An RNA of 177 nucleotides, treated with DMS and 2A3 and read out base by base. For 2A3, 2,288 sequencing reads were counted. High DMS reactivity at an A or C suggests that its Watson-Crick edge is free. For DMS, 3,487 sequencing reads were counted. DMS adducts were read by reverse transcription with MarathonRT.

RNA sequence: GGGAACGACUCGAGUAGAGUCGAAAACAUCUUGGCGGCGCGGGCGUCGUUGGAGAUGUCCUCGGACAGGGGGAUCUUGCCGUGGGCGGCGACGUAGCGGCGCUGGAGGUCCUUGUCGAGCCACCGGUCGACCACUUAUGUUCGCAUAAGUGGUCGAAAAAGAAACAACAACAACAAC
Reactivity to DMS in 0.01 (KOAc 150mM, MgCl2 10mM, bicine 150mM(pH8.5), 24C), signal-to-noise 2, nucleotides 027 to 126: c060a060u010c040u010u010g000g010c000g010g010c010g030c060g000g020g010c020g010u000c000g010u000u010g010g020a050g020a080u010g010u000c070c010u000c020g010g010a070c070a080g000g010g000g030g010a060u010c030u010u000g010c040c030g030u000g010g010g020c010g000g000c150g010a050c030g020u000a300g010c050g010g000c010g020c100u000g010g000a040g010g000u010c010c010u000u010g020u000c040g000a130g020c040c030a120c040c030g020g000
Reactivity to 2A3 in 0.01 (KOAc 150mM, MgCl2 10mM, bicine 150mM(pH8.5), 24C), signal-to-noise 2, nucleotides 027 to 126: c010a100u000c010u080u150g040g010c010g030g050c020g000c100g060g300g060c010g000u010c000g020u020u110g150g070a170g000a040u090g060u030c020c000u000c020g060g070a100c040a110g000g000g030g000g080a050u020c010u000u140g000c020c000g060u050g000g150g030c010g000g030c010g000a010c010g000u020a000g010c020g110g000c040g020c000u010g010g010a020g000g020u040c040c000u010u050g080u020c020g010a030g060c010c010a050c030c010g060g100